[RMDB]
RNA sequence: GGGAACGACUCGAGUAGAGUCGAAAAAGCAGAUAUGGACGAGCUGGAGUCUUGGAGUGCGACGAAGGAAUUCGGAAACGAAUUCCAGAGCACUUCCAAGACGAUGAAAGCUCGUCCUAAGUCAUAAGAACUGCAACAAGUUCGCUUGUUGCAGUUCAAAAGAAACAACAACAACAAC
Reactivity to DMS in 0.01 (KOAc 150mM, MgCl2 10mM, bicine 150mM(pH8.5), 24C), signal-to-noise 2, nucleotides 027 to 126: a080g010c220a090g010a030u010a300u020g000g000a040c010g020a010g030c000u000g000g010a060g020u010c000u000u000g020g000a020g000u000g010c010g040a180c300g040a200a140g010g020a000a010u000u010c000g050g010a040a150a240c030g020a020a020u000u000c010c030a010g000a060g010c010a020c000u000u010c000c000a010a000g000a020c000g020a070u000g030a110a180a030g000c010u000c000g000u020c000c000u010a000a060g010u000c030a150u000a100a180
Notes
Structure probing data (DMS) for a 177-nucleotide construct. It was measured as part of the RMDB library TTRDES. In probing experiments dimethyl sulfate is read out at A N1 and C N3, which are open when not base-paired. Values cover nucleotides 27 to 126. The RNA was probed in 150 mM KOAc, 10 mM MgCl2 and 150 mM bicine (pH 8.5) at 24 C.